[RMDB]
RNA sequence: GGGAACGACUCGAGUAGAGUCGAAAAGGUUGCACUUGGAAGGAUGAAGUCCAAAAUGGUGUCUUGAAUGUGAUGAACCGUCUUAAUUUCUAUAGUUUUGGUCACAUUGCCGAAAACAUUGGCGCCAUUUUUGAAUCUCCUCCUGUAUACGUUGAGAAGUAUGGGCAUACUUCGGUAUGCCCAUACUAAAAGAAACAACAACAACAAC
Reactivity to 2A3 in 0.01 (KOAc 150mM, MgCl2 10mM, bicine 150mM(pH8.5), 24C), signal-to-noise 2, nucleotides 027 to 156: g120g020u050u080g030c080a110c050u070u070g010g030a080a040g060g000a060u300g070a160a050g080u010c010c020a000a000a000a000u000g000g000u010g020u070c010u020u070g110a070a030u030g000u010g010a050u010g060a040a040c010c010g100u050c010u030u130a210a260u130u300u040c140u150a130u110a170g030u000u040u120u280g050g000u020c010a010c000a130u020u020g110c080c070g100a070a070a070a030c040a080u040u050g000g010c000g010c000c000a000u000u000u000u000u010g010a000a010u000c000u000c000c010u030c000c000u010g030u020a050u000a070c060g050u040u030g040a060g040a060

Overview: Conditions: 150 mM KOAc, 10 mM MgCl2 and 150 mM bicine (pH 8.5), 24 C. Structure probing data (2A3) for a 207-nucleotide construct. Source: RMDB library OK3TST, as collected in RNAgym.